Structure probing data (2A3 and DMS) for a 177-nucleotide construct. For DMS, 1,142 sequencing reads were counted. The reactions ran in a buffer of 150 mM KOAc, 10 mM MgCl2 and 150 mM bicine (pH 8.5), at 24 C. Values are in units of 0.01, from 0 to 300, in steps of 10.
RNA sequence: GGGAACGACUCGAGUAGAGUCGAAAAGCAGACCACAUAUGUGGUCGAUGCCAUGGAGGCCCAUCAGUUUAUCAAGGCUCCUGGCAUCACUACUGCUAUUGAGCAGGCUGCUCUAGCAGCGGCCAACCAGCGUCUAAAACUUCGGUUUUAGACGCUGAAAAGAAACAACAACAACAAC
Reactivity to 2A3 in 0.01 (KOAc 150mM, MgCl2 10mM, bicine 150mM(pH8.5), 24C), signal-to-noise 3, nucleotides 027 to 126: g080c040a010g000a020c050c010a000c050a060u300a090u300g010u000g010g000u000c010g000a010u010g000c010c010a070u220g020g060a030g090g180c010c020c020a110u220c070a060g060u080u170u210a200u170c050a060a030g040g000c000u030c000c010u000g000g040c010a000u000c010a000c020u210a050c020u030g000c020u030a100u130u230g120a070g050c090a050g110g000c010u040g020c000u000c040u050a090g010c050a000g000c000g000g050c000c010a010a010c030
Reactivity to DMS in 0.01 (KOAc 150mM, MgCl2 10mM, bicine 150mM(pH8.5), 24C), signal-to-noise 2, nucleotides 027 to 126: g000c060a120g000a040c010c000a010c010a270u000a110u030g020u020g000g000u000c060g010a000u000g000c000c000a020u010g020g000a030g010g020c000c000c020a070u000c180a170g010u000u040u000a070u000c130a150a130g000g010c000u000c000c000u000g000g000c000a010u000c000a050c180u000a110c100u000g000c000u000a150u030u020g000a050g050c080a130g020g040c030u000g010c010u000c030u020a050g010c080a000g010c010g000g000c020c040a090a070c270